Conditions: 150 mM KOAc, 10 mM MgCl2 and 150 mM bicine (pH 8.5), 24 C.
Structure probing data (2A3 and DMS) for a 177-nucleotide construct.

RNA sequence: GGGAACGACUCGAGUAGAGUCGAAAAGAUAUGGAUGGCCAGACUUCAACAGCUUAAUCGGAAACGAUUAAGACAUGAAGAAUCUGGUCCAUCCUAAGUCAAAGUCUCGCAGUUCGCUGCGAGACAACGAACUUAACCUGUUCGCAGGUUAAGUUCGAAAAGAAACAACAACAACAAC
Reactivity to 2A3 in 0.01 (KOAc 150mM, MgCl2 10mM, bicine 150mM(pH8.5), 24C), signal-to-noise 2, nucleotides 027 to 126: g040a020u100a020u220g000g020a020u000g010g000c000c000a010g000a030c030u020u030c060a190a150c040a210g050c010u010u010a000a000u040c010g060g040a030a070a050c000g000a000u000u020a010a000g030a060c030a160u100g000a000a060g010a060a260u010c000u010g000g030u000c000c000a000u000c000c010u010a000a000g010u030c030a030a160a030g020u000c000u000c010g020c000a010g050u110u270c260g090c180u000g020c000g000a020g010a000c010a000a000
Reactivity to DMS in 0.01 (KOAc 150mM, MgCl2 10mM, bicine 150mM(pH8.5), 24C), signal-to-noise 2, nucleotides 027 to 126: g000a040u000a300u000g000g000a000u020g000g030c010c000a000g000a050c120u010u000c010a020a180c260a230g010c000u000u000a000a000u000c000g020g000a150a170a190c030g020a030u000u000a010a030g020a030c060a190u000g030a020a170g010a190a090u000c000u010g000g010u030c000c000a010u000c000c010u000a010a130g010u010c020a090a160a210g000u000c000u010c000g000c000a010g040u000u000c260g040c020u020g010c010g000a010g000a000c000a000a080